[RMDB]
RNA sequence: GGGAACGACUCGAGUAGAGUCGAAAAUUUUAAUUCACUUUUAUAGCCUUUCGUAAACGAUGUCUACUUUGUCUUAUGUAUCGCCUGAUGCUUUAAAAGGCUGGUUAAUGGAAUCGCCUAACGAGAUUAGCAUAAUCGAUGUUCGUGACUACGAUUAGCAUUACCUACGCUUCGGCGUAGGUAAUGCAAAAGAAACAACAACAACAAC
Reactivity to DMS in 0.01 (KOAc 150mM, MgCl2 10mM, bicine 150mM(pH8.5), 24C), signal-to-noise 1, nucleotides 027 to 156: u000u000u000u000a000a080u000u010c070a080c030u000u000u000u010a060u010a140g030c030c020u000u000u000c030g040u010a020a130a030c020g030a020u010g010u000c000u000a050c030u000u000u000g000u000c060u010u000a100u000g050u000a060u000c010g000c010c050u000g010a120u010g020c030u000u000u000a070a060a120a050g030g080c020u000g010g020u000u000a100a070u010g020g020a120a030u000c010g010c000c030u000a170a080c070g020a060g020a110u000u010a100g000c110a150u000a100a070u000c020g000a120u000g000u000u000c050g010u000g020a090c030u000a070c050g010a120u010u010a030
Reactivity to 2A3 in 0.01 (KOAc 150mM, MgCl2 10mM, bicine 150mM(pH8.5), 24C), signal-to-noise 1, nucleotides 027 to 156: u040u090u020u110a020a100u070u080c020a010c030u130u030u060u150a110u150a090g000c010c010u010u080u070c010g000u020a020a070a050c060g070a030u060g070u030c030u050a110c030u000u070u040g040u000c000u030u060a030u130g050u030a060u000c010g060c060c050u080g040a080u050g060c000u000u010u190a090a180a020a000g020g000c010u060g000g080u030u110a160a160u120g030g070a020a020u070c030g030c000c040u030a030a000c030g000a010g000a110u000u180a050g000c030a000u060a030a010u000c010g020a010u050g020u040u000c010g010u000g040a030c020u030a000c090g060a080u070u060a000